[RMDB]
RNA sequence: GGGAACGACUCGAGUAGAGUCGAAAACGGUUGCGAGACGACAACGAGCAUGAAACGCACAACCUUUCGGUGGAUUAAGUGGGCUUGGGAGUUCGCCUGUGAGCUUAAUCCGUUCACGUCUGUGUUCCACAAUGCGUACGUUCGCGUACGCAUUGUGAAAAGAAACAACAACAACAAC
Reactivity to DMS in 0.01 (KOAc 150mM, MgCl2 10mM, bicine 150mM(pH8.5), 24C), signal-to-noise 4, nucleotides 027 to 126: c100g010g010u000u000g000c060g020a080g000a080c040g010a130c090a060a060c120g000a110g000c040a060u000g000a060a090a120c130g000c030a140c110a080a070c040c030u020u010u010c090g000g000u010g000g010a020u000u010a020a030g020u000g010g000g030c030u000u000g000g010g010a180g010u000u000c090g000c000c010u000g010u000g020a150g020c020u000u000a030a020u000c050c070g010u000u010c070a080c060g010u000c060u000g000u000g010u010u000c060
Reactivity to 2A3 in 0.01 (KOAc 150mM, MgCl2 10mM, bicine 150mM(pH8.5), 24C), signal-to-noise 3, nucleotides 027 to 126: c010g040g030u050u080g000c030g030a060g040a070c030g020a000c040a070a040c090g010a030g020c050a050u130g100a110a150a010c080g000c020a030c020a050a080c020c000u030u100u080c120g030g040u090g020g000a020u030u020a040a020g020u230g040g070g030c040u060u060g100g000g000a130g060u110u070c040g060c020c000u070g020u080g040a020g000c000u040u020a010a000u020c030c000g000u060u070c030a010c030g050u040c070u080g090u010g040u090u010c040